[RMDB]
RNA sequence: GGGAACGACUCGAGUAGAGUCGAAAACGACGCCGGGCUGGAUGUCCGGGUUGCCGGCCUUGCCGAUGGCGGCGAUGCGGCCGUUCUUGAGCGCGAGGUCGGCCUUGACGAUGCCCCAGUGGUCGAGAAAGUGGCUACUAUUCGUAGUAGCCACUUUAAAAGAAACAACAACAACAAC
Reactivity to 2A3 in 0.01 (KOAc 150mM, MgCl2 10mM, bicine 150mM(pH8.5), 24C), signal-to-noise 5, nucleotides 027 to 126: c030g020a000c030g020c060c010g030g000g010c000u120g180g150a170u220g020u000c020c000g000g000g030u090u150g040c000c030g000g020c020c000u010u030g000c000c000g050a030u040g000g000c010g000g000c010g020a110u300g070c110g170g000c010c000g010u140u120c060u110u080g030a030g010c130g000c010g020a000g010g000u000c000g010g000c000c000u010u060g010a000c010g070a080u120g030c000c000c000c000a060g080u140g040g020u000c010g000a010g140
Reactivity to DMS in 0.01 (KOAc 150mM, MgCl2 10mM, bicine 150mM(pH8.5), 24C), signal-to-noise 4, nucleotides 027 to 126: c080g010a060c110g020c040c300g000g010g020c000u010g000g030a120u040g020u000c000c070g000g000g010u030u020g000c010c000g000g000c000c000u000u000g010c000c010g000a180u010g000g000c000g000g020c000g010a150u040g020c180g020g010c010c000g010u010u020c040u030u010g000a300g000c210g000c010g000a020g000g020u000c000g000g010c000c000u000u000g000a030c030g000a150u010g010c060c000c010c080a090g000u000g010g010u010c020g000a090g010
About this RNA:
Structure probing data (2A3 and DMS) for a 177-nucleotide construct. The RNA was probed in 150 mM KOAc, 10 mM MgCl2 and 150 mM bicine (pH 8.5) at 24 C. DMS adducts were read by reverse transcription with MarathonRT.